[RMDB]
RNA sequence: GGGAACGACUCGAGUAGAGUCGAAAAUGGGGCGAUGCCGGUGGUGAUGAAGAAGCUCUCCUAACGUCUCGAAAAAGAAAAGAUGCGAAAGCUGAUCUGUCCGCGGCAGAGGAUGGCGUUAAAGUGGGACCAAGUAACGAUUCGUCGUUACUUGGUCAAAAGAAACAACAACAACAAC
Reactivity to 2A3 in 0.01 (KOAc 150mM, MgCl2 10mM, bicine 150mM(pH8.5), 24C), signal-to-noise 1, nucleotides 027 to 126: u080g010g020g000g010c040g040a030u050g020c020c000g020g010u060g000g030u110g030a110u040g040a020a090g030a050a040g000c000u000c050u040c010c020u040a080a040c010g020u010c040u060c010g070a140a040a010a020a000g110a080a110a000a000g030a000u080g030c050g070a130a060a000g000c000u010g020a080u000c010u050g070u040c010c030g000c020g050g000c030a030g020a010g090g000a050u100g010g010c020g010u030u130a130a150a020g050u070g050g050
Reactivity to DMS in 0.01 (KOAc 150mM, MgCl2 10mM, bicine 150mM(pH8.5), 24C), signal-to-noise 3, nucleotides 027 to 126: u010g020g000g010g010c090g000a110u000g010c070c030g020g020u030g040g030u000g030a130u000g030a050a060g000a140a100g010c020u000c020u000c010c060u000a050a110c150g000u000c000u000c030g000a040a070a090a090a030g010a030a090a100a090g010a050u000g000c100g010a050a050a100g020c010u010g000a140u000c020u000g010u000c050c020g010c050g000g010c020a050g000a090g010g010a070u010g020g000c020g000u000u000a040a040a120g010u000g020g010
An RNA of 177 nucleotides, treated with 2A3 and DMS and read out base by base. The 2A3 profile rests on 1,240 reads. It was measured as part of the RMDB library OK2TST. Conditions: 150 mM KOAc, 10 mM MgCl2 and 150 mM bicine (pH 8.5), 24 C.